[RMDB]
Chemical mapping of a 177-nucleotide RNA with 2A3 and DMS.
RNA sequence: GGGAACGACUCGAGUAGAGUCGAAAAGAAGAGAAAGGAGACACACGGACAGUCUCCAGAGGUUCCUAAGGCCUCGAUCGCGCCUGCCGGGAAUCAUGGACACCCGGUUGUCCAUGACAGAAGAAGAGAUACCGCUACCGUUCGCGGUAGCGGUAUCAAAAGAAACAACAACAACAAC
Reactivity to 2A3 in 0.01 (KOAc 150mM, MgCl2 10mM, bicine 150mM(pH8.5), 24C), signal-to-noise 2, nucleotides 027 to 126: g100a000a000g110a000g070a120a090a050g020g040a000g010a000c020a000c010a010c190g160g050a020c110a100g000u000c000u010c000c000a000g000a000g000g000u020u260c060c060u100a000a070g060g030c010c000u060c040g000a050u090c010g000c000g030c060c000u010g040c030c010g000g040g020a000a090u000c000a020u000g000g000a000c000a000c010c120c130g160g000u020u000g000u000c000c000a020u000g060a070c060a060g070a090a000g020a120a000g000a020
Reactivity to DMS in 0.01 (KOAc 150mM, MgCl2 10mM, bicine 150mM(pH8.5), 24C), signal-to-noise 2, nucleotides 027 to 126: g000a060a120g000a050g000a040a210a190g000g000a000g000a060c000a070c090a060c090g000g000a110c210a170g000u000c000u000c000c000a050g030a080g000g030u000u010c050c070u010a070a130g000g000c020c020u000c090g030a130u010c150g000c050g000c020c020u000g000c070c010g010g020g000a050a170u000c000a010u000g000g030a030c010a000c170c120c130g000g000u040u000g000u000c000c000a000u000g000a040c180a030g000a120a050g020a100a060g000a140
The DMS profile rests on 1,923 reads.